An RNA of 177 nucleotides, treated with DMS and read out base by base.
Source: RMDB library OK2TRN, as collected in RNAgym.
The reactions ran in a buffer of 150 mM KOAc, 10 mM MgCl2 and 150 mM bicine (pH 8.5), at 24 C.
RNA sequence: GGGAACGACUCGAGUAGAGUCGAAAAUAUAUGACUGGUCAAAAGAAAAGUAAUAGUUGAUAAAUGUACACUUACUAAUGGCGUCCAAGAUACGUAAUGAUAUUUGAUCACUGGAAGCAACUGUGAAUCCAACUAACGAGUUCGCUCGUUAGUUGGAAAAAGAAACAACAACAACAAC
Reactivity to DMS in 0.01 (KOAc 150mM, MgCl2 10mM, bicine 150mM(pH8.5), 24C), signal-to-noise 1, nucleotides 027 to 126: u000a070u020a080u040g000a110c140u020g000g000u000c010a000a060a080a080g020a090a090a090a110g000u000a070a060u000a050g010u000u020g010a170u010a040a070a170u010g000u000a130c060a060c030u020u000a090c030u000a080a130u000g000g010c020g040u000c050c080a030a120g000a090u000a000c070g000u000a030a100u000g000a060u000a150u020u000u000g000a060u000c050a060c020u000g000g020a110a030g000c200a020a100c110u000g000u000g010a110a120